[RMDB]
RNA sequence: GGGAACGACUCGAGUAGAGUCGAAAAGUGCCACUUGUAGAACAAAUGAGAUAUAGUGAUCCAACAAUUACAAGCAUUGUCAUUCAUCAAACACUGAAACGUUGGCGUAAUAGUGAGUCUGAUACUGAGGUGGUAUGGAGUUCGCUCCAUACCACCUAAAAGAAACAACAACAACAAC
Reactivity to DMS in 0.01 (KOAc 150mM, MgCl2 10mM, bicine 150mM(pH8.5), 24C), signal-to-noise 2, nucleotides 027 to 126: g090u030g040c040c040a070c010u000u000g050u000a080g020a120a050c090a010a010a010u000g000a180g000a080u000a090u010a170g020u010g000a090u010c020c040a120a060c070a060a070u010u040a030c070a050a060g020c060a020u000u000g000u000c020a180u010u000c100a040u010c050a070a070a100c120a040c090u000g010a040a030a040c130g000u010u000g030g020c120g010u010a020a050u010a070g050u000g000a150g010u000c050u000g000a040u000a090c130u010g000